[RMDB]
Description:
Structure probing data (2A3) for a 177-nucleotide construct. The 2A3 profile rests on 597 reads. Conditions: 150 mM KOAc, 10 mM MgCl2 and 150 mM bicine (pH 8.5), 24 C. It was measured as part of the RMDB library OK1LIB.
RNA sequence: GGGAACGACUCGAGUAGAGUCGAAAAUCCACGGAUCUCGCAGGGAGAGUGCGUGCACCGAGGAAUCCCCGUCUGGCUUUUGCGUUCUCUCCGGUGCGAGUCUUACGCGGCGGGGACUCUUUGAGAGCUCCGAGGGGAUCUUCGGAUCCCCUCGGAGAAAAGAAACAACAACAACAAC
Reactivity to 2A3 in 0.01 (KOAc 150mM, MgCl2 10mM, bicine 150mM(pH8.5), 24C), signal-to-noise 2, nucleotides 027 to 126: u070c020c020a060c040g040g000a060u150c040u070c070g040c120a140g110g000g010a030g000a000g000u000g030c050g000u060g000c050a020c010c040g010a050g110g030a070a140u050c000c030c000c010g080u110c050u090g170g000c070u180u040u040u260g030c040g060u120u000c040u000c000u000c020c040g000g020u090g000c020g000a000g020u000c000u040u100a170c180g020c000g000g020c000g000g040g000g000a050c000u000c000u190u100u190g250a300g000a040g080